RNA sequence: GGGAACGACUCGAGUAGAGUCGAAAAUUCUGGUAGAAGGAAGCACGACAUUCUUCCCAAUGUCCAAUUUAAAAUCUUCUGGGUAUCUUAAAAUAUCUCCGUAAUCCGUCAAAGAGGUGACGGCCAGGCAUCCGAUUUAGUUCGCUAAAUCGGAUGCAAAAGAAACAACAACAACAAC
Reactivity to 2A3 in 0.01 (KOAc 150mM, MgCl2 10mM, bicine 150mM(pH8.5), 24C), signal-to-noise 3, nucleotides 027 to 126: u080u020c020u000g040g000u060a010g000a090a000g080g050a050a030g110c120a010c140g010a010c000a000u040u010c020u050u000c000c000c000a010a000u010g020u000c000c020a050a040u080u200u260a230a160a030a080u020c010u030u010c020u010g000g000g040u010a040u040c040u110u210a120a080a060a020u080a040u030c020u000c000c000g000u030a060a070u050c000c010g070u070c160a110a110a080g150a090g060g020u060g020a030c020g000g000c010c010a050g020
Reactivity to DMS in 0.01 (KOAc 150mM, MgCl2 10mM, bicine 150mM(pH8.5), 24C), signal-to-noise 1, nucleotides 027 to 126: u030u040c000u000g000g010u030a020g000a060a000g000g000a070a080g060c220a210c250g030a030c030a030u000u000c190u000u000c020c000c000a170a010u000g000u020c020c180a080a140u000u000u060a040a070a180a260u040c000u000u000c010u000g000g030g000u000a010u000c030u010u120a040a090a010a030u000a000u000c000u000c000c040g000u010a160a120u000c010c000g020u000c180a020a250a080g000a070g020g000u000g000a020c030g000g010c080c020a100g000